[RMDB]
RNA sequence: GGGAACGACUCGAGUAGAGUCGAAAAUAUGCAGAGUGGUGUGAGAAAAGUUACAUAUGGUACUGCGCAUUGGUUGUUUGCGACCCUUGUCUCAACCUAUGUGAUAAUCUUACAAGCCACUAAAUUUGGGCGAGUCUCUUCGGAGACUCGAAAAGAAACAACAACAACAAC
Reactivity to DMS in 0.01 (KOAc 150mM, MgCl2 10mM, bicine 150mM(pH8.5), 24C), signal-to-noise 6, nucleotides 027 to 129: u070a090u050g000c120a130g020a070g000u020g020g050u020g020u000g020a030g020a020a040a060a220g010u040u000a010c030a010u020a030u100g060g030u040a140c220u000g000c300g030c020a030u000u020g030g040u010u010g040u040u030u050g070c090g010a040c030c010c080u000u000g030u040c100u040c000a070a070c000c000u040a040u000g020u000g020a030u020a040a300u010c010u000u020a010c020a060a200g070c010c020a010c020u000a000a050a080u010u040u080g020g030g040
Reactivity to 2A3 in 0.01 (KOAc 150mM, MgCl2 10mM, bicine 150mM(pH8.5), 24C), signal-to-noise 5, nucleotides 027 to 129: u290a090u130g080c050a000g010a000g150u010g000g050u030g010u010g000a000g010a000a060a080a110g000u030u020a000c010a010u030a000u290g020g000u090a130c040u010g000c020g030c000a000u020u000g020g020u020u030g090u140u200u280g120c040g000a010c000c000c000u030u010g040u030c020u000c050a120a220c020c000u000a000u000g010u000g000a010u020a150a010u010c000u000u000a000c010a010a060g050c000c000a020c000u030a000a020a040u140u130u010g060g050g080